[RMDB]
RNA sequence: GGGAACGACUCGAGUAGAGUCGAAAACCAUGCUCUUCAUCUGAGCUGGCUGGGGAAAGCGGAAUGACUGGUAGUACCUGAACUCCCCUGAUCAAUCCGCCAAUGAAAAAGCGCAUGUCCCGCCCGAAGGCGCUGUUGUAUUCGUACAACAGCGCCUAAAAGAAACAACAACAACAAC
Reactivity to 2A3 in 0.01 (KOAc 150mM, MgCl2 10mM, bicine 150mM(pH8.5), 24C), signal-to-noise 1, nucleotides 027 to 126: c010c000a030u080g000c000u020c000u060u020c060a200u060c040u040g010a000g070c000u020g020g000c000u000g000g000g000g030a090a100a030g050c070g020g040a050a080u080g050a060c020u060g030g000u030a050g070u090a100c050c000u070g070a080a100c000u050c010c060c000c000u010g060a190u010c050a050a000u000c000c000g010c000c040a050a020u030g140a030a010a060a050a070g100c070g000c000a000u000g030u010c020c000c010g020c020c060c030g040a000
Reactivity to DMS in 0.01 (KOAc 150mM, MgCl2 10mM, bicine 150mM(pH8.5), 24C), signal-to-noise 1, nucleotides 027 to 126: c110c000a110u110g030c000u000c000u040u090c100a090u000c300u000g000a010g060c100u000g000g000c080u060g000g000g000g100a090a020a000g060c200g050g000a030a000u000g000a000c090u000g000g060u000a020g020u000a300c120c070u000g000a030a020c050u000c030c030c050c080u060g000a180u000c010a210a240u000c000c000g000c040c050a150a020u010g000a000a060a070a080a000g030c120g080c040a010u030g000u000c000c000c000g000c080c000c070g080a150

An RNA of 177 nucleotides, treated with 2A3 and DMS and read out base by base. For DMS, 1,081 sequencing reads were counted. Source: RMDB library RFM100, as collected in RNAgym. The RNA was probed in 150 mM KOAc, 10 mM MgCl2 and 150 mM bicine (pH 8.5) at 24 C.